[RMDB]
RNA sequence: GGGAACGACUCGAGUAGAGUCGAAAAUGAUGUGCGUCGACUGCGAAGCGGUCUAUUGUGUGGUAACCGGCCUAUCCACAUGAUAGGUUUGUGCUAUGAGGCCGGAAAUAGCACGUGCACAUCUAAAGGGUACGUCGUGGUUCGCUACGACGUACCCAAAAGAAACAACAACAACAAC
Reactivity to DMS in 0.01 (KOAc 150mM, MgCl2 10mM, bicine 150mM(pH8.5), 24C), signal-to-noise 2, nucleotides 027 to 126: u000g020a000u010g000u000g000c040g030u000c090g000a110c000u000g000c060g000a140a060g030c000g030g000u000c000u020a000u000u030g000u000g000u010g000g010u000a030a090c010c000g000g020c000c000u010a040u010c300c120a030c000a060u040g000a150u000a040g000g000u010u000u040g080u000g000c020u000a040u030g000a040g000g000c000c000g020g000a030a070a070u050a160g020c000a000c000g020u010g000c030a010c010a000u030c010u020a020a050a070
Reactivity to 2A3 in 0.01 (KOAc 150mM, MgCl2 10mM, bicine 150mM(pH8.5), 24C), signal-to-noise 3, nucleotides 027 to 126: u170g000a000u000g020u000g000c040g000u020c030g000a100c040u030g010c030g170a100a000g060c040g040g000u000c000u010a060u060u130g070u000g000u000g020g060u130a130a020c000c010g000g010c010c010u070a060u100c010c010a030c030a100u100g060a100u040a020g030g010u000u080u040g030u020g000c000u000a000u120g110a060g000g000c000c000g000g000a080a000a000u020a000g010c000a000c000g030u000g000c000a010c000a000u000c000u000a030a050a010

About this RNA: An RNA of 177 nucleotides, treated with DMS and 2A3 and read out base by base. For DMS, 2,969 sequencing reads were counted. Source: RMDB library OK1LIB, as collected in RNAgym. Conditions: 150 mM KOAc, 10 mM MgCl2 and 150 mM bicine (pH 8.5), 24 C. DMS adducts were read by reverse transcription with MarathonRT.